[RMDB]
Description:
The record gives the reactivity of an RNA of 170 nucleotides to DMS and 2A3. The 2A3 profile rests on 1,927 reads. Source: RMDB library 15KLIB, as collected in RNAgym. The RNA was probed in 150 mM KOAc, 10 mM MgCl2 and 150 mM bicine (pH 8.5) at 24 C. The DMS profile rests on 3,698 reads. For DMS the reverse transcriptase was MarathonRT.

RNA sequence: GGGAACGACUCGAGUAGAGUCGAAAAUCUGUUCGGGCCCUCUUCGCCGGGGGGGCUCCUUCCCCAUCCUUAUCCUUCUUUCCAAGAAUUCCUUUGAUGUUUCCCAGCCAGGGAUUGUCUUCCUCUACCAGAACGCCCUUCGGGGCGUUCAAAAGAAACAACAACAACAAC
Reactivity to DMS in 0.01 (KOAc 150mM, MgCl2 10mM, bicine 150mM(pH8.5), 24C), signal-to-noise 1, nucleotides 027 to 129: u020c110u030g030u030u080c140g000g010g090c020c010c000u000c070u000u000c050g000c140c010g020g000g000g010g000g000g020c020u060c000c050u030u030c020c050c040c000a070u000c110c020u010u060a070u090c030c020u020u020c090u050u000u000c080c020a090a090g020a180a110u000u000c040c020u080u000u090g000a110u080g030u000u000u000c010c000c000a180g000c110c050a140g030g000g010a000u070u000g050u050c050u000u000c030c000u000c030u010a040c190c000a040
Reactivity to 2A3 in 0.01 (KOAc 150mM, MgCl2 10mM, bicine 150mM(pH8.5), 24C), signal-to-noise 2, nucleotides 027 to 129: u060c010u020g140u050u020c040g020g000g000c000c000c000u000c000u040u000c030g030c000c060g000g000g000g000g000g010g010c020u050c010c020u050u080c020c010c000c000a010u020c000c000u000u060a130u150c000c000u000u060c010u020u050u040c010c010a020a050g000a100a150u100u050c030c000u040u000u130g160a110u030g000u010u010u040c010c000c000a050g050c060c020a000g000g000g000a020u020u120g010u040c000u020u000c050c020u030c000u130a030c000c050a040